[RMDB]
RNA sequence: GGGAACGACUCGAGUAGAGUCGAAAAAAGGACAUUGACUGCCAGGUAGUUGCAAAUAAAUUAGGCGUCUACCUCUCCUUAUACUUAACAGAGCUUACAACUGUAUUUGGUUCUCAGAUCACUAAUCGUUGGAACCUGAGUUCGCUCAGGUUCCAACAAAAGAAACAACAACAACAAC
Reactivity to 2A3 in 0.01 (KOAc 150mM, MgCl2 10mM, bicine 150mM(pH8.5), 24C), signal-to-noise 1, nucleotides 027 to 126: a000a000g050g000a010c070a040u110u100g040a000c040u090g050c040c000a000g000g000u000a000g000u000u110g000c000a000a080a170u250a050a090a110u230u110a220g060g060c000g000u050c000u030a030c000c010u000c010u070c050c000u100u030a070u000a110c000u020u000a040a000c040a040g040a000g130c020u110u140a030c020a110a030c040u080g000u160a220u030u020u010g030g000u060u040c030u000c040a080g010a100u070c080a100c070u120a100a080u090c110